[RMDB]
RNA sequence: GGGAACGACUCGAGUAGAGUCGAAAAAGACAGACUGACACAGGAGCCACCGAGUGUCCUAACUGGCCUUGCACUCCUGGAGUCUUUGAGGAAGGCUGGUGUUCAGGUACUGAAUGUCCCUGGAUCAUCCCACUCAUCACUUCGGUGAUGAGUGGGAAAAAGAAACAACAACAACAAC
Reactivity to DMS in 0.01 (KOAc 150mM, MgCl2 10mM, bicine 150mM(pH8.5), 24C), signal-to-noise 2, nucleotides 027 to 126: a030g020a300c040a050g000a120c100u000g000a050c040a080c010a070g000g010a130g000c050c040a120c300c000g000a020g020u000g020u030c020c040u010a100a150c250u000g020g000c040c000u050u010g000c120a110c040u000c020c050u000g000g000a060g000u000c010u020u000u000g020a050g000g000a050a040g000g010c000u010g020g010u000g020u010u000c000a030g000g020u000a060c010u000g040a160a130u000g000u000c090c000c000u030g000g000a070u010c140a140
Reactivity to 2A3 in 0.01 (KOAc 150mM, MgCl2 10mM, bicine 150mM(pH8.5), 24C), signal-to-noise 1, nucleotides 027 to 126: a000g060a020c020a000g070a020c030u070g000a000c030a010c010a050g040g000a000g010c040c020a090c070c070g030a060g030u060g050u110c010c020u070a130a070c090u060g000g020c050c000u070u050g050c000a030c110u000c000c020u000g020g020a000g040u040c000u020u030u050g110a030g050g050a030a020g030g050c000u070g050g090u130g040u130u020c030a000g060g040u040a150c040u050g100a140a050u110g130u060c000c010c000u040g060g000a070u130c000a010
Notes
The record gives the reactivity of an RNA of 177 nucleotides to DMS and 2A3. Conditions: 150 mM KOAc, 10 mM MgCl2 and 150 mM bicine (pH 8.5), 24 C. It was measured as part of the RMDB library OK2TST. For DMS the reverse transcriptase was MarathonRT.